[RMDB]
RNA sequence: GGGAACGACUCGAGUAGAGUCGAAAACGGUCUCGGAUUCGGGUAUCACGUCCUCUAACAGAUUGUCGCUAAAUUCGGCGAUGUUACUCGCAGGCUGUAGCUCCAGAUACCAAGAACACGGAGCGCCUACAAACUUGGUGUUCGCACCAAGUUUGUAAAAAGAAACAACAACAACAAC
Reactivity to 2A3 in 0.01 (KOAc 150mM, MgCl2 10mM, bicine 150mM(pH8.5), 24C), signal-to-noise 2, nucleotides 027 to 126: c050g000g000u030c030u010c080g000g030a110u120u060c030g090g000g030u080a020u100c010a010c130g050u010c060c000u000c070u040a090a080c040a060g070a130u150u150g120u010c030g050c090u080a030a130a300u250u130c060g000g000c030g070a100u040g040u030u030a010c020u050c040g000c020a020g000g070c010u070g060u140a030g010c010u000c000c000a060g030a110u030a150c100c000a090a060g010a130a020c050a020c110g020g020a020g040c010g040c000c000
Reactivity to DMS in 0.01 (KOAc 150mM, MgCl2 10mM, bicine 150mM(pH8.5), 24C), signal-to-noise 2, nucleotides 027 to 126: c030g010g000u010c010u000c140g040g000a300u010u020c080g000g000g060u000a030u000c030a070c180g020u000c040c040u000c060u010a090a120c260a040g000a170u000u000g030u000c010g020c130u010a060a080a170u000u000c170g000g000c000g000a040u000g000u000u000a040c040u000c040g000c170a060g000g000c020u000g000u000a040g040c040u000c040c030a140g030a060u000a090c080c080a080a090g000a090a060c200a130c090g000g000a020g020c050g040c050c080